The data come from the RNA Mapping Database (RMDB), library OK3TST. Chemical mapping of a 207-nucleotide RNA with DMS and 2A3. The RNA was probed in 150 mM KOAc, 10 mM MgCl2 and 150 mM bicine (pH 8.5) at 24 C. For 2A3 the reverse transcriptase was SuperScript II with manganese. Values cover nucleotides 27 to 156. For 2A3, 1,188 sequencing reads were counted.
[RMDB]
RNA sequence: GGGAACGACUCGAGUAGAGUCGAAAAUCAGCCAAGACCGAAGAUUCCAGGCCUUGUGGCAGAGAGCCUGUUUAGUUCUGUGUCACACACAGAAUGACCAGGUAGGUCAUUCUCUUCACAAUGGCUCUUUAUCAGAGCUUUCUCUAGAAGCAGAAGACGAUCCCUAUCAUUUCGAUGAUAGGGAUCGAAAAGAAACAACAACAACAAC
Reactivity to DMS in 0.01 (KOAc 150mM, MgCl2 10mM, bicine 150mM(pH8.5), 24C), signal-to-noise 1, nucleotides 027 to 156: u040c060a130g020c080c010a040a090g020a070c030c050g020a090a070g030a210u000u010c060c020a160g020g000c000c020u000u010g000u000g020g000c120a030g020a090g020a100g010c000c000u000g010u000u010u000a120g020u010u010c000u000g010u000g030u050c300a130c050a300c100a010c010a010g000a020a000u000g000a070c250c070a080g020g020u000a050g000g000u010c020a080u000u000c000u000c060u000u000c100a100c090a070a070u010g010g000c000u000c020u000u000u000a120u000c170a070g030a130g000c090u000u000u000c050u000c040u000a040g050a120a070g020c020a120g020a060a100g000a290
Reactivity to 2A3 in 0.01 (KOAc 150mM, MgCl2 10mM, bicine 150mM(pH8.5), 24C), signal-to-noise 2, nucleotides 027 to 156: u070c010a000g050c010c040a050a010g020a020c040c070g040a110a020g050a150u220u040c050c030a020g010g040c030c010u040u030g030u030g000g020c090a000g010a000g000a010g060c020c000u060g050u050u130u160a050g010u000u020c000u000g050u030g030u090c090a090c020a010c000a000c010a120g020a010a000u010g020a030c000c040a000g030g060u060a040g030g080u050c010a020u140u020c010u010c000u000u030c000a000c020a080a060u160g000g000c020u050c020u000u140u050a050u050c040a000g000a000g000c010u000u060u030c050u010c000u090a020g050a120a030g030c140a020g050a080a000g080a060